The record gives the reactivity of an RNA of 177 nucleotides to DMS and 2A3. Reactivities are given for positions 27 through 126. Source: RMDB libraries RFM100 and RFMREP, as collected in RNAgym.

[RMDB]
RNA sequence: GGGAACGACUCGAGUAGAGUCGAAAAAAAACGCCUGUAGCCGGCGAGUGAAGACGAACCAUCGACUGCCGUGUUCCUUUUCCUCUUGGAGGUUGGAGUCCCCUGGGCGCCCCCACACGGCUAGACGAUUGAACUACAUUUUCGAAUGUAGUUCAAUAAAAGAAACAACAACAACAAC
Reactivity to DMS in 0.01 (KOAc 150mM, MgCl2 10mM, bicine 150mM(pH8.5), 24C), signal-to-noise 5, nucleotides 027 to 126: a060a050a090a120c120g010c020c010u010g010u020a130g030c070c060g000g010c050g000a100g020u030g000a080a080g000a080c090g000a090a080c090c060a070u010c040g000a100c050u010g010c010c020g010u000g000u010u010c020c010u010u010u010u020c010c010u000c080u030u020g020g010a040g010g000u000u000g000g010a130g010u010c010c020c040c050u010g020g000g010c060g000c030c020c020c010c040a070c040a020c030g000g000c010u010a020g000a090c060g010
Reactivity to 2A3 in 0.01 (KOAc 150mM, MgCl2 10mM, bicine 150mM(pH8.5), 24C), signal-to-noise 6, nucleotides 027 to 126: a000a000a000a000c110g030c040c020u130g050u100a020g060c020c020g040g010c030g020a050g030u150g060a070a040g040a030c050g020a050a030c050c010a060u070c050g030a030c050u040g030c020c000g030u020g040u050u050c010c000u070u070u060u050c010c020u070c050u090u080g120g010a050g030g040u050u070g030g020a030g040u030c000c000c000c020u020g020g010g020c010g020c000c000c000c010c000a010c000a000c020g000g020c020u040a030g020a030c040g030